[RMDB]
RNA sequence: GGGAACGACUCGAGUAGAGUCGAAAAGGGUGCUGCUGGCGGAGAAAACGACCGACCAGAUUCGGUUCAUGUCGGCGGGCGACUUCAAGAAGCUCCUCUAGGCCGGAGUGUCCGUCAGUGGUUCAGCGCCUACCUCACAUUUCGAUGUGAGGUAGGCAAAAGAAACAACAACAACAAC
Reactivity to DMS in 0.01 (KOAc 150mM, MgCl2 10mM, bicine 150mM(pH8.5), 24C), signal-to-noise 1, nucleotides 027 to 126: g000g010g020u010g000c000u010g010c000u010g000g000c010g000g000a050g010a090a050a160a130c240g000a050c000c020g020a030c050c170a150g010a140u000u000c140g000g010u030u000c110a100u000g000u000c070g040g010c040g010g010g010c040g000a110c030u000u000c080a130a080g020a090a300g010c080u000c100c050u020c090u020a140g020g020c090c020g000g030a160g010u010g040u000c000c010g000u000c020a010g020u010g010g000u000u000c040a090g010c230

Conditions: 150 mM KOAc, 10 mM MgCl2 and 150 mM bicine (pH 8.5), 24 C. Chemical mapping of a 177-nucleotide RNA with DMS. DMS adducts were read by reverse transcription with MarathonRT. It was measured as part of the RMDB library OK2TST.